[RMDB]
RNA sequence: GGGAACGACUCGAGUAGAGUCGAAAAUAGCACUGGCGGGGACGUCGAUGGCCAGUGAGGACAGCCGUAACUGAUCGCUGACAUGGUCGGAUGGGUGCUUGGCCAGCUGCGCGACCAGCGACACGCGAUGGCACUGUCCAUUCGUGGACAGUGCCAUAAAAGAAACAACAACAACAAC
Reactivity to DMS in 0.01 (KOAc 150mM, MgCl2 10mM, bicine 150mM(pH8.5), 24C), signal-to-noise 1, nucleotides 027 to 126: u020a150g010c030a150c030u000g000g020c000g020g000g000g020a130c090g000u000c040g010a250u000g010g000c050c020a000g000u000g010a020g000g020a070c120a070g000c030c090g000u030a070a150c100u000g000a050u000c030g000c020u020g010a160c140a110u010g020g020u000c020g000g000a120u000g000g000g000u000g000c040u000u000g020g020c010c010a040g000c120u000g060c010g000c040g000a110c050c030a100g000c020g000a100c110a060c040g000c110g000
Reactivity to 2A3 in 0.01 (KOAc 150mM, MgCl2 10mM, bicine 150mM(pH8.5), 24C), signal-to-noise 1, nucleotides 027 to 126: u080a000g000c000a000c050u000g000g000c020g000g010g050g060a040c010g080u070c080g070a120u070g000g000c000c010a030g030u060g060a000g110g020a040c010a000g030c020c020g110u090a150a050c010u010g070a160u070c030g040c060u000g030a020c020a170u060g040g000u020c010g040g010a040u030g030g140g070u120g080c040u060u050g080g030c020c000a020g000c120u040g000c030g100c050g000a010c000c000a050g000c020g130a040c020a060c090g000c030g000

Chemical mapping of a 177-nucleotide RNA with DMS and 2A3. For DMS, 943 sequencing reads were counted. Values cover nucleotides 27 to 126. For DMS the reverse transcriptase was MarathonRT.